[RMDB]
RNA sequence: GGGAACGACUCGAGUAGAGUCGAAAAACAGGAGCAUCCUCUACGGAGGAUGCUCCUGAACUUGAUGAUGAACUUCACGGUACCCUGAGUUCUAAAAACGAUGAUGAGCCCCCUCUCGUCUGAUUAAUCGAUCAUUCUGUUUCGACAGAAUGAUCGAAAAAGAAACAACAACAACAAC
Reactivity to 2A3 in 0.01 (KOAc 150mM, MgCl2 10mM, bicine 150mM(pH8.5), 24C), signal-to-noise 2, nucleotides 027 to 126: a010c000a000g000g000a000g000c000a010u000c040c030u020c000u020a090c300g020g010a000g000g020a000u000g000c020u030c000c010u000g000a000a000c000u020u130g020a030u020g000a000u030g000a010a010c000u040u050c110a000c110g040g100u110a110c010c000c000u000g030a000g010u090u000c080u080a020a100a020a000a000c090g040a050u090g010a030u030g010a020g020c000c000c000c000c050u000c000u000c030g030u030c050u010g050a080u070u100a100a110
Reactivity to DMS in 0.01 (KOAc 150mM, MgCl2 10mM, bicine 150mM(pH8.5), 24C), signal-to-noise 1, nucleotides 027 to 126: a090c000a070g000g030a030g030c000a030u010c000c000u000c000u000a220c210g020g000a030g000g020a000u020g000c000u000c000c040u000g000a000a010c100u010u010g020a180u010g000a060u010g020a040a040c000u020u000c040a040c020g010g000u010a120c110c000c010u000g000a150g000u000u020c000u020a070a060a020a150a160c200g060a070u010g000a020u010g010a140g000c040c000c010c000c050u020c000u000c000g000u000c000u000g020a110u030u000a070a190
The data come from the RNA Mapping Database (RMDB), library RFM100.
This 177-nucleotide RNA was probed chemically with 2A3 and DMS.
Values cover nucleotides 27 to 126.
The DMS profile rests on 1,756 reads.
As a SHAPE reagent, 2A3 marks flexible, mostly unpaired nucleotides at the ribose 2'-OH.
2A3 adducts were read by reverse transcription with SuperScript II with manganese.